Notes: Chemical mapping of a 177-nucleotide RNA with 2A3 and DMS. It was measured as part of the RMDB library VIROID.
RNA sequence: GGGAACGACUCGAGUAGAGUCGAAAAUCUCAGCCCUUCCACCUUGGGGUGCCCUAUUCGGAGCACUGCAGUUCCCGAUAGAAAGGCUAAGCACGUCGCAAUGACGUAAGGUGGGACUUUUCCUUCUUAUAGUAUAUUGCUUCGGCAAUAUACUAUAAAAAGAAACAACAACAACAAC
Reactivity to 2A3 in 0.01 (KOAc 150mM, MgCl2 10mM, bicine 150mM(pH8.5), 24C), signal-to-noise 3, nucleotides 027 to 126: u020c000u000c000a010g010c010c000c000u030u040c010c010a010c020c010u000u030g050g000g000g020u110g020c030c000c010u020a040u010u040c010g000g010a040g050c020a040c210u300g050c070a080g010u050u050c060c010c030g010a000u020a020g080a040a110a010g010g000c020u040a040a030g090c070a010c030g010u000c000g020c210a260a280u300g000a000c010g030u020a010a000g010g000u000g000g000g000a010c020u120u100u040u100c020c000u010u050c020u020
Reactivity to DMS in 0.01 (KOAc 150mM, MgCl2 10mM, bicine 150mM(pH8.5), 24C), signal-to-noise 3, nucleotides 027 to 126: u000c030u000c010a260g000c010c010c010u000u000c010c010a030c020c010u000u010g000g010g000g000u000g020c020c010c020u000a140u000u000c290g010g010a090g010c040a090c170u000g000c190a140g000u000u000c060c000c010g040a040u000a030g010a050a110a070g000g010c020u000a080a120g010c240a060c010g030u000c000g000c130a100a090u000g000a020c010g000u000a010a010g020g010u000g000g000g030a070c160u010u000u000u000c030c040u000u000c080u000
The DMS profile rests on 2,051 reads.